Structure probing data (2A3 and DMS) for a 207-nucleotide construct. For 2A3 the reverse transcriptase was SuperScript II with manganese. It was measured as part of the RMDB library OK3TST. The reactions ran in a buffer of 150 mM KOAc, 10 mM MgCl2 and 150 mM bicine (pH 8.5), at 24 C.
[RMDB]
RNA sequence: GGGAACGACUCGAGUAGAGUCGAAAAAUGCAUUCCAAGCAUCUAGCAUAAUACCUAGCAUAUAGUAGGUGCUUAAUAAAUAUUUGCUGAAUGGAUAAAGGAACACUAUGAGCUAGUCUGGGCAUUUGGAAGUGAGAGAAGUUACCCUCUGGUUCACCAAGGAGUUGUCUUUCGAGACAACUCCUUGAAAAGAAACAACAACAACAAC
Reactivity to 2A3 in 0.01 (KOAc 150mM, MgCl2 10mM, bicine 150mM(pH8.5), 24C), signal-to-noise 1, nucleotides 027 to 156: a000u040g010c000a070u020u080c000c030a060a000g000c000a000u000c050u110a040g100c010a110u110a240a110u120a300c060c050u040a000g040c090a090u200a060u100a190g150u000a000g000g020u020g040c000u000u050a000a000u060a210a100a000u140a050u080u040u020g010c010u010g080a010a030u110g030g040a040u080a210a120a050g060g000a000a050c080a030c120u060a110u200g010a000g030c020u020a000g050u090c040u020g010g000g000c040a010u010u010u120g020g040a030a040g040u020g040a020g000a000g000a070a030g010u000u130a090c000c000c010u000c070u050g110g000u050u100c040a030c090
Reactivity to DMS in 0.01 (KOAc 150mM, MgCl2 10mM, bicine 150mM(pH8.5), 24C), signal-to-noise 1, nucleotides 027 to 156: a060u020g010c000a130u010u000c020c030a050a130g060c010a010u000c020u000a290g060c050a080u000a090a080u000a170c020c030u020a140g060c080a110u020a110u000a080g010u050a010g020g090u010g000c020u000u020a080a090u000a080a080a210u010a100u000u000u020g000c030u000g000a130a080u000g030g010a140u010a050a080a120g000g040a110a080c040a050c080u000a020u000g000a100g000c060u010a050g040u000c070u000g030g050g010c060a140u000u000u020g020g010a070a050g010u010g010a160g030a140g000a000a090g010u000u000a060c020c000c020u000c040u010g000g020u010u000c020a160c090